[RMDB]
RNA sequence: GGGAACGACUCGAGUAGAGUCGAAAAGCGCCUUUAUAACUGCCAAUUCUGACAGUUUCGACUACGCGCUCGCCGCGUAAUCGCGGGCCUGUGUUUGCGCUGCUCUGAGCGAACAUAUCGGCCCGACGCCAAACGGAGCUUGCUCUUACGUUGUGCAGCAUUAUAACUUCUUCGGAAGUUAUAAUGCAAAAGAAACAACAACAACAAC
Reactivity to 2A3 in 0.01 (KOAc 150mM, MgCl2 10mM, bicine 150mM(pH8.5), 24C), signal-to-noise 4, nucleotides 027 to 156: g070c030g100c020c020u090u150u050a300u120a070a040c010u030g010c030c030a130a210u250u200c150u180g030a060c020a030g010u020u000u120c020g010a010c010u010a000c010g030c020g020c040u070c110g230c220c000g000c000g000u010a030a010u050c020g000c010g060g000g010c010c000u030g000u000g020u000u010u040g010c020g000c040u130g040c050u050c100u230g070a020g000c000g010a000a000c000a000u040a070u140c110g000g000c020c010c010g020a020c010g030c040c050a050a040a000c020g000g000a000g000c020u030u080g080c000u040c000u110u080a070c120g010u000u000g010u050g010c030a020
This 207-nucleotide RNA was probed chemically with 2A3. The reactions ran in a buffer of 150 mM KOAc, 10 mM MgCl2 and 150 mM bicine (pH 8.5), at 24 C. Source: RMDB library RSTRND, as collected in RNAgym. For 2A3, 2,196 sequencing reads were counted. Values cover nucleotides 27 to 156.